Chemical mapping of a 207-nucleotide RNA with DMS and 2A3.
The reactions ran in a buffer of 150 mM KOAc, 10 mM MgCl2 and 150 mM bicine (pH 8.5), at 24 C.
For DMS the reverse transcriptase was MarathonRT.

[RMDB]
RNA sequence: GGGAACGACUCGAGUAGAGUCGAAAAACGAAACCCAAGGUGCAUGCCGAGGUGCGGUAGGCCUCGUUAACAAACCGCAGAAAAAUAGUCGCAAACGACGAAAACUACGCACUCGCAGCUUAAUAACAGUAGGGUCCCUACUUCGGUAGGGACCCAAUCAAUCAGUGAGAUUCGUCUCACUGAUUGAAAAAGAAACAACAACAACAAC
Reactivity to DMS in 0.01 (KOAc 150mM, MgCl2 10mM, bicine 150mM(pH8.5), 24C), signal-to-noise 2, nucleotides 027 to 156: a190c060g000a110a020a120c020c010c000a180a220g050g050u000g000c040a120u010g030c110c010g010a130g020g020u000g010c000g020g000u010a050g030g010c060c010u000c020g000u000u000a030a210c130a130a020a060c060c060g030c050a160g000a040a190a020a140a210u000a100g000u030c000g070c080a130a120a070c040g020a030c040g010a040a010a030a090c000u000a030c000g000c060a070c010u030c020g000c040a030g000c030u000u030a110a080u000a070a120c080a150g020u000a150g040g020g000u010c010c010c000u000a010c010u000u000c070g010g050u000a020g000g010g000a000c000c000c000a000a020
Reactivity to 2A3 in 0.01 (KOAc 150mM, MgCl2 10mM, bicine 150mM(pH8.5), 24C), signal-to-noise 2, nucleotides 027 to 156: a010c050g040a080a010a040c010c000c010a030a000g090g030u050g000c070a100u030g010c090c050g010a020g030g100u050g010c030g010g090u070a030g030g010c000c000u010c020g070u050u080a030a010c040a040a080a010c070c000g020c040a060g110a020a100a050a000a070u140a020g040u000c040g020c100a060a080a080c050g030a010c030g090a000a020a000a000c030u060a000c010g000c070a010c000u010c040g050c010a060g030c020u150u100a150a070u150a130a050c110a060g130u180a170g030g000g000u000c010c000c000u010a030c010u050u130c210g050g010u000a000g000g000g080a000c000c000c000a000a000